[RMDB]
RNA sequence: GGGAACGACUCGAGUAGAGUCGAAAAUAAUCGGAACAUUUACCAGCGAUGUGAUGGCAUCGUUACGAAGAUCACAAGGGACCUGGCCGUGACUUUUGCCCAAGGAGGAAUGGCAAAGCUGUGCAGGGUACAACUUAAGGUUCGCCUUAAGUUGUACAAAAGAAACAACAACAACAAC
Reactivity to 2A3 in 0.01 (KOAc 150mM, MgCl2 10mM, bicine 150mM(pH8.5), 24C), signal-to-noise 4, nucleotides 027 to 126: u050a000a040u100c030g040g030a100a030c040a150u070u100u100a080c050c020a010g000c020g040a020u000g040u040g060a220u150g150g000c010a010u010c030g000u010u030a030c060g020a030a020g040a090u070c030a020c020a100a030g060g000g030a020c010c030u020g080g010c000c000g010u020g040a130c000u030u050u050u050g020c000c020c000a000a020g040g030a040g000g040a100a050u050g000g000c000a030a020a060g000c030u030g040u090g070c020a010g100g050
Reactivity to DMS in 0.01 (KOAc 150mM, MgCl2 10mM, bicine 150mM(pH8.5), 24C), signal-to-noise 3, nucleotides 027 to 126: u000a110a050u000c050g000g000a080a080c080a070u020u000u000a130c080c030a070g010c020g030a080u010g020u010g010a110u010g000g000c020a030u000c080g010u000u000a080c100g000a070a100g010a070u000c050a060c070a070a120g020g000g010a140c070c030u000g010g010c010c020g010u010g000a130c030u020u000u000u000g010c000c010c040a100a100g000g010a030g010g000a090a030u010g000g010c030a040a040a070g000c030u000g010u000g000c050a060g010g010

An RNA of 177 nucleotides, treated with 2A3 and DMS and read out base by base. The data come from the RNA Mapping Database (RMDB), library RFMREP.